[RMDB]
RNA sequence: GGGAACGACUCGAGUAGAGUCGAAAAGCCAGAUGCUUCGGCAUCUGGCAAAGGAAUUGAGGUUAGAGACGACCUGUUAAACAGACUCACAAAUAAUUAAAAAAACCGCCCUCUUCGGAGGGCGGAACUACAUGUUCAAGUUCGCUUGAACAUGUAGAAAAGAAACAACAACAACAAC
Reactivity to 2A3 in 0.01 (KOAc 150mM, MgCl2 10mM, bicine 150mM(pH8.5), 24C), signal-to-noise 2, nucleotides 027 to 126: g000c000c000a010g010a010u000g010c000u050u100c150g110g000c000a000u000c010u000g000g040c000a000a040a000g030g010a090a090u140u250g050a050g040g020u030u080a070g020a000g020a090c030g030a020c000c060u080g190u100u260a070a050a020c040a040g020a060c020u010c040a030c020a020a110a050u290a060a100u260u240a130a180a010a020a030a000a040c000c020g020c020c010c000u000c000u070u040c200g050g000a000g000g000g010c000g000g000a000a000
Reactivity to DMS in 0.01 (KOAc 150mM, MgCl2 10mM, bicine 150mM(pH8.5), 24C), signal-to-noise 1, nucleotides 027 to 126: g000c000c000a000g040a010u010g020c000u000u010c110g040g040c000a020u010c000u000g000g000c010a010a010a110g020g000a070a140u000u000g020a010g000g010u010u030a020g020a150g020a160c050g000a090c000c010u010g040u010u030a060a040a080c090a190g030a200c020u010c030a180c210a030a090a060u000a100a100u010u000a010a000a060a110a040a230a120c010c000g000c000c000c000u000c010u010u000c130g030g010a010g000g010g010c010g000g000a000a040
Record summary:
The record gives the reactivity of an RNA of 177 nucleotides to 2A3 and DMS. Reactivities are given for positions 27 through 126. For DMS, 950 sequencing reads were counted. The reactions ran in a buffer of 150 mM KOAc, 10 mM MgCl2 and 150 mM bicine (pH 8.5), at 24 C.